[RMDB]
RNA sequence: GGGAACGACUCGAGUAGAGUCGAAAAUCUGGACAGGGGUUCGAUUCCCCUCACCUCCACCCAAGGGCAUUCCGCUGAGUGUUUUUGGAUGGGGGUGUACUGGUCUCGACAGGGCGGACAAAGGUGCCACACAGAAUGAAUUCGUUCAUUCUGUGUGAAAAGAAACAACAACAACAAC
Reactivity to 2A3 in 0.01 (KOAc 150mM, MgCl2 10mM, bicine 150mM(pH8.5), 24C), signal-to-noise 8, nucleotides 027 to 126: u020c010u040g040g040a010c020a040g000g010g000g010u030u060c010g020a030u030u030c000c000c000c000u000c010a000c000c000u000c000c000a000c000c000c000a000a000g010g010g000c010a000u020u020c070c090g150c300u300g000a010g010u010g020u000u000u000u000u000g020g000a020u000g010g000g000g000g000u000g000u000a000c000u010g040g020u020c020u010c040g040a050c030a100g000g010g030c020g020g000a030c050a020a130a020g100g020u080g040c010
Reactivity to DMS in 0.01 (KOAc 150mM, MgCl2 10mM, bicine 150mM(pH8.5), 24C), signal-to-noise 9, nucleotides 027 to 126: u020c030u000g010g020a080c110a040g000g000g010g010u010u000c070g000a300u010u010c010c000c000c040u000c010a000c000c000u000c000c000a010c040c000c010a010a010g000g000g000c010a010u000u010c000c300g000c230u030g000a020g010u000g000u000u000u000u000u000g000g000a040u000g000g000g000g000g010u000g000u010a010c090u010g000g010u010c020u010c080g000a110c100a070g010g000g010c030g010g000a070c090a070a090a110g000g010u000g010c090

An RNA of 177 nucleotides, treated with 2A3 and DMS and read out base by base. DMS adducts were read by reverse transcription with MarathonRT. The data come from the RNA Mapping Database (RMDB), libraries RFM100 and RFMREP. Values cover nucleotides 27 to 126. The reactions ran in a buffer of 150 mM KOAc, 10 mM MgCl2 and 150 mM bicine (pH 8.5), at 24 C.